Overview: An RNA of 207 nucleotides, treated with DMS and 2A3 and read out base by base. The reactions ran in a buffer of 150 mM KOAc, 10 mM MgCl2 and 150 mM bicine (pH 8.5), at 24 C. DMS adducts were read by reverse transcription with MarathonRT.
RNA sequence: GGGAACGACUCGAGUAGAGUCGAAAACGUGCCUUCAUCCUAAGGGUUUGAUAUCUGCUAAAACCCGGUGCAUUCAUCAAUGCAGGUUAAGCCAAAGGGAUGUCCCGACCGGAGGCCGACAAUCCAGAUAGCUCAAGAAUGUUCGCAUUCUUGAGAAUGACAAUCAGCUAUUCGUAGCUGAUUGUCAAAAAGAAACAACAACAACAAC
Reactivity to DMS in 0.01 (KOAc 150mM, MgCl2 10mM, bicine 150mM(pH8.5), 24C), signal-to-noise 2, nucleotides 027 to 156: c040g060u000g020c010c020u000u000c070a110u000c000c020u010a090a300g000g000g000u000u020u000g000a090u000a110u000c020u000g010c020u000a200a040a060a040c020c020c050g020g080u010g030c010a090u000u010c040a010u000c030a070a300u000g010c020a040g000g040u000u000a080a040g000c020c030a050a190a300g000g000g010a060u000g040u000c000c020c010g000a300c070c010g020g000a300g040g000c020c000g000a050c090a060a070u020c030c030a180g000a190u000a180g010c020u000c000a030a010g000a030a060u000g020u000u010c300g010c010a020u000u000c000u000u000g010a000g010a020a070
Reactivity to 2A3 in 0.01 (KOAc 150mM, MgCl2 10mM, bicine 150mM(pH8.5), 24C), signal-to-noise 2, nucleotides 027 to 156: c010g120u150g000c010c000u080u060c000a030u050c000c010u070a080a130g030g000g020u020u010u040g070a070u080a050u100c020u020g030c010u030a060a020a090a230c040c100c050g030g000u030g010c100a100u110u300c010a040u080c020a090a050u090g000c000a000g040g040u000u030a020a000g020c010c010a000a040a080g000g000g020a050u030g020u020c020c020c000g040a060c020c020g020g000a000g000g000c010c010g000a010c010a060a080u090c090c030a020g070a200u090a100g030c000u010c000a000a000g000a000a000u000g000u040u070c100g000c110a010u010u000c000u000u000g000a000g000a000a010